[RMDB]
RNA sequence: GGGAACGACUCGAGUAGAGUCGAAAAAAUGGGUCCACAGGCGGUGAAUUACUUGUGAUGCUCUUCCAAGGACUGAAUGAGGAGAGACAUUUUAAUCAAAGCACCAGCAAAGCUUUUGUAGCGAUGAACAUACAAUUAGUGACCUUCUCCUAUCAGACUAUCAGUAUCGCUUCGGCGAUACUGAUAGAAAAGAAACAACAACAACAAC
Reactivity to DMS in 0.01 (KOAc 150mM, MgCl2 10mM, bicine 150mM(pH8.5), 24C), signal-to-noise 1, nucleotides 027 to 156: a080a080u000g000g110g010u000c120c020a070c080a060g000g010c030g030g030u030g010a110a070u020u010a040c050u010u010g060u000g010a110u000g000c020u010c000u000u000c060c050a140a150g020g020a300c080u020g000a150a180u000g000a030g020g010a010g020a130g020a140c070a030u000u000u000u000a040a080u010c100a080a080a120g020c030a050c020c010a110g020c070a050a070a170g020c000u000u000u010u000g020u000a090g000c060g020a120u000g010a150a060c040a070u000a060c040a020a030u020u010a050g020u000g020a120c030c000u010u010c000u000c020c030u000a140u000c080a070g040a130
Reactivity to 2A3 in 0.01 (KOAc 150mM, MgCl2 10mM, bicine 150mM(pH8.5), 24C), signal-to-noise 2, nucleotides 027 to 156: a000a020u230g010g000g000u170c200c060a080c060a040g160g000c050g000g040u040g040a120a060u170u020a060c030u020u020g050u070g020a040u010g000c000u000c000u020u030c000c000a050a040g140g060a080c110u170g060a090a070u120g010a040g040g000a010g010a020g000a020c000a030u080u210u130u100a030a050u090c020a120a000a000g000c010a020c020c010a010g060c020a120a070a020g030c030u040u150u090u110g060u160a050g050c050g030a020u080g080a160a040c040a040u130a040c090a140a150u090u100a110g040u080g020a010c010c000u000u040c080u040c000c000u050a040u150c020a020g150a210